[RMDB]
RNA sequence: GGGAACGACUCGAGUAGAGUCGAAAAACUGGAAAUAUCCAGAUGUGGAGUUAUAAUUAAAAAUGAAGGCAAAAUAGCUUCCCUUAAAAGAAGUGAAACUAUUAAUUCCAAUCUGCAGAGCUGAUAACAGAAUUAUUGUGUUCGCACAAUAAUUCUGAAAAGAAACAACAACAACAAC
Reactivity to 2A3 in 0.01 (KOAc 150mM, MgCl2 10mM, bicine 150mM(pH8.5), 24C), signal-to-noise 6, nucleotides 027 to 126: a000c030u050g030g080a090a070a030u170a050u050c030c000a000g010a020u100g090u080g170g010a010g020u020u040a060u050a150a160u130u130a080a080a030a020a050u150g070a100a060g160g010c110a100a040a060a120u020a030g000c000u010u000c010c010c000u040u060a120a180a010a020g060a020a010g010u040g030a060a010a000c030u030a050u170u080a050a020u020u000c000c000a010a010u000c000u020g000c040a040g020a030g100c070u070g070a080u040a150a010
Reactivity to DMS in 0.01 (KOAc 150mM, MgCl2 10mM, bicine 150mM(pH8.5), 24C), signal-to-noise 3, nucleotides 027 to 126: a070c040u010g010g010a090a120a120u030a060u010c080c000a040g000a040u000g010u020g000g000a040g000u020u000a030u020a070a080u000u020a010a040a070a060a070u040g000a150a110g000g000c160a050a040a060a020u020a300g010c010u010u000c000c000c010u010u040a070a080a130a160g000a010a020g000u030g000a050a080a040c040u030a020u020u010a010a020u000u000c010c000a000a060u000c010u000g020c090a090g010a060g000c090u020g000a060u040a070a200